[RMDB]
RNA sequence: GGGAACGACUCGAGUAGAGUCGAAAAGAAAGAAAGCUGGAUGUGAUGAGUUGGCAGUGUAUUGUUAGCUGGUUGAAUAUGUGAGUAGCACCAGCUAACGUGCAGCUGCUAACUUAUUGCAGACCAAAUAGCAUCCUUACUUCGGUAAGGAUGCUAUAAAAGAAACAACAACAACAAC
Reactivity to 2A3 in 0.01 (KOAc 150mM, MgCl2 10mM, bicine 150mM(pH8.5), 24C), signal-to-noise 6, nucleotides 027 to 126: g160a040a090a020g140a060a100a000g110c120u060g000g000a020u000g010u010g000a000u000g000a000g000u000u000g010g010c010a020g000u000g010u040a070u190u210g000u000u000a000g000c000u000g020g030u090u090g080a180a070u110a080u160g180u130g110a140g090u150a000g050c010a000c000c000a000g000c000u000a000a000c000g000u000g000c000a080g080c000u000g000c000u000a000a000c000u000u000a000u000u000g000c000a000g020a170c000c000a000a090
Reactivity to DMS in 0.01 (KOAc 150mM, MgCl2 10mM, bicine 150mM(pH8.5), 24C), signal-to-noise 3, nucleotides 027 to 126: g020a090a100a060g010a050a060a110g000c100u010g000g000a300u010g000u000g010a010u000g000a000g000u000u000g020g000c000a010g030u010g000u000a010u020u030g020u000u000a000g000c000u000g000g010u000u000g020a080a100u000a020u010g010u110g000a180g020u000a050g000c050a000c000c000a010g000c000u000a000a010c020g010u000g010c010a060g010c000u000g000c000u000a010a010c000u000u000a000u000u000g000c000a020g010a150c010c020a010a050